Structure probing data (2A3 and DMS) for a 170-nucleotide construct. The RNA was probed in 150 mM KOAc, 10 mM MgCl2 and 150 mM bicine (pH 8.5) at 24 C. For DMS the reverse transcriptase was MarathonRT.
RNA sequence: GGGAACGACUCGAGUAGAGUCGAAAAUUCUAUACAGAGGACAUGGCCUCAAGAUUUGCUGAUGGGCUCUGCUUAUUUUGGAACUGUAAUGUACCAAAAUAUCCUAAUAAUGCAAUUGUAUGCAGGUAACGUCGAAACUUCGGUUUCGACAAAAGAAACAACAACAACAAC
Reactivity to 2A3 in 0.01 (KOAc 150mM, MgCl2 10mM, bicine 150mM(pH8.5), 24C), signal-to-noise 6, nucleotides 027 to 129: u000u000c000u010a090u020a100c030a010g050a020g030g050a030c020a080u090g050g010c000c000u070c070a050a050g090a100u100u060u110g030c020u120g020a070u060g000g040g010c010u020c010u030g030c030u040u020a030u000u060u030u010g010g020a030a010c020u010g050u220a070a080u130g000u010a030c000c000a000a000a010a010u050a020u000c010c050u070a130a070u110a130a040u140g020c010a010a050u080u090g040u060a080u020g010c000a000g030g060u040a140a010c030
Reactivity to DMS in 0.01 (KOAc 150mM, MgCl2 10mM, bicine 150mM(pH8.5), 24C), signal-to-noise 3, nucleotides 027 to 129: u040u020c070u040a120u030a140c090a080g010a080g020g000a000c020a000u030g000g050c010c050u000c110a030a070g090a090u000u000u000g000c080u000g010a070u050g010g010g010c070u010c000u040g060c120u030u000a020u000u000u000u000g030g000a130a010c030u000g080u070a080a050u100g000u010a070c030c030a030a000a020a010u020a030u010c030c060u020a080a040u040a090a090u060g020c040a040a050u040u020g020u030a060u010g010c030a030g000g000u060a070a100c060